[RMDB]
An RNA of 170 nucleotides, treated with DMS and 2A3 and read out base by base.
RNA sequence: GGGAACGACUCGAGUAGAGUCGAAAAGCAAAGGGCGGCGGUCCUUAGUUCUCUUACUCUUUUCUGUAAAGAGGAGACUGUAGGAUCCGCCGCCCAAGCCCGAACUGAGCCAAGUCCGAGCGAAGGGAAGGUCCCGGGUUCGCCCGGGACAAAAGAAACAACAACAACAAC
Reactivity to DMS in 0.01 (KOAc 150mM, MgCl2 10mM, bicine 150mM(pH8.5), 24C), signal-to-noise 2, nucleotides 027 to 129: g000c150a010a120a190g000g010g010c010g090g000c020g010g000u000c000c040u000u070a020g000u040u000c010u010c000u000u090a300c010u020c000u010u000u120u070c290u170g020u070a000a000a000g000a030g030g030a020g030a020c000u000g000u000a040g000g000a040u100c000c100g030c000c010g100c030c030c000a040a040g050c050c040c000g070a120a080c170u000g030a040g000c000c000a150a120g030u000c050c030g020a130g000c070g060a090a090g010g000g010a090a070g000
Reactivity to 2A3 in 0.01 (KOAc 150mM, MgCl2 10mM, bicine 150mM(pH8.5), 24C), signal-to-noise 1, nucleotides 027 to 129: g290c080a000a000a000g070g000g000c000g000g000c030g000g000u050c000c000u000u000a000g010u150u150c050u000c000u050u260a030c000u010c080u050u030u180u000c250u220g220u270a020a020a020g000a000g000g000a000g000a000c000u020g070u020a000g060g060a060u010c000c010g000c000c080g040c010c000c000a020a020g000c000c000c000g000a000a010c010u030g010a000g000c020c000a090a090g010u030c000c030g090a000g020c080g000a000a000g020g000g000a020a020g080

Overview: The 2A3 profile rests on 1,071 reads.